The record gives the reactivity of an RNA of 177 nucleotides to DMS and 2A3. The RNA was probed in 150 mM KOAc, 10 mM MgCl2 and 150 mM bicine (pH 8.5) at 24 C. DMS (dimethyl sulfate) methylates the pairing face of unpaired adenines and cytosines. Source: RMDB library OK2TST, as collected in RNAgym.

RNA sequence: GGGAACGACUCGAGUAGAGUCGAAAAAUGGCAGGUUCUGGAUAAACGCCUGUUGCUCACCGCCGCGCUGUUCCGUACUGAUAUCGAAAAUGAAGUUGAGCAAAAUGAUGACGGGACUUACUCGCAACUGUGUUACACGGUUCGCCGUGUAACACAGAAAAGAAACAACAACAACAAC
Reactivity to DMS in 0.01 (KOAc 150mM, MgCl2 10mM, bicine 150mM(pH8.5), 24C), signal-to-noise 2, nucleotides 027 to 126: a090u010g000g000c050a050g020g030u000u010c100u020g000g010a160u000a110a180a110c160g000c040c020u010g050u010u000g000c060u000c050a080c090c030g010c030c050g000c120g020c050u000g000u000u000c000c010g010u020a070c050u000g000a110u010a050u000c050g000a000a030a060a140u010g000a070a020g010u000u000g000a050g000c030a040a030a030a050u010g000a130u010g010a130c080g020g000g000a030c040u010u010a070c100u000c050g010c220a070a150
Reactivity to 2A3 in 0.01 (KOAc 150mM, MgCl2 10mM, bicine 150mM(pH8.5), 24C), signal-to-noise 1, nucleotides 027 to 126: a000u030g010g000c000a010g000g050u100u050c120u210g090g060a200u160a100a130a010c040g000c000c010u000g020u040u000g030c000u020c030a110c030c000g090c000c000g000c000g000c020u040g030u080u030c000c000g060u020a110c010u000g000a000u020a050u160c100g000a060a080a000a020u160g000a050a030g110u120u070g040a020g000c000a000a010a020a050u090g010a030u020g000a000c010g040g010g000a020c000u030u020a020c030u060c020g000c010a000a130